[RMDB]
RNA sequence: GGGAACGACUCGAGUAGAGUCGAAAAUUAUUUGCGUCUCACCUGUCAUGUCUGGUAAUUCAUAUAGAGAUCGAAAAAAGAGAUCUGUUGAAGCAUUUCUUGAUUGGAUGGACACAUUCGGAUUGCGAGACUCCGUUCCGGAUAGACGCAAAUUAGAUACUGAAUGAACUUUCGAGUUCAUUCAGUAAAAAGAAACAACAACAACAAC
Reactivity to 2A3 in 0.01 (KOAc 150mM, MgCl2 10mM, bicine 150mM(pH8.5), 24C), signal-to-noise 4, nucleotides 027 to 156: u120u040a000u000u000u010g000c000g000u000c000u000c040a010c000c000u020g030u070c020a050u070g000u000c010u060g130g020u030a020a010u010u010c030a010u080a030u100a190g080a040g020a100u040c040g090a090a070a030a020a060a000g040a000g010a020u000c010u030g070u090u150g120a100a050g020c010a010u020u060u060c010u030u060g060a100u060u120g110g020a050u040g060g040a020c030a000c020a150u100u110c050g000g000a010u000u070g010c040g040a020g010a020c020u000c120c120g030u070u010c010c020g000g000a010u010a020g000a000c000g000c000a000a000a000u020u020a030g020a020
Reactivity to DMS in 0.01 (KOAc 150mM, MgCl2 10mM, bicine 150mM(pH8.5), 24C), signal-to-noise 3, nucleotides 027 to 156: u010u010a050u000u020u010g010c020g000u000c010u000c110a110c020c040u000g010u020c040a140u020g000u000c010u000g040g050u000a040a040u000u000c030a140u010a140u010a110g020a300g010a100u000c030g010a000a040a180a160a090a090g000a070g020a030u000c020u000g000u000u000g010a230a080g010c090a040u000u000u010c030u000u010g020a270u010u010g020g000a070u000g000g010a300c070a080c080a160u000u000c060g040g010a060u000u000g000c000g020a150g000a040c030u000c080c090g020u020u020c070c000g040g030a060u000a030g010a040c030g020c010a010a010a040u000u000a080g000a280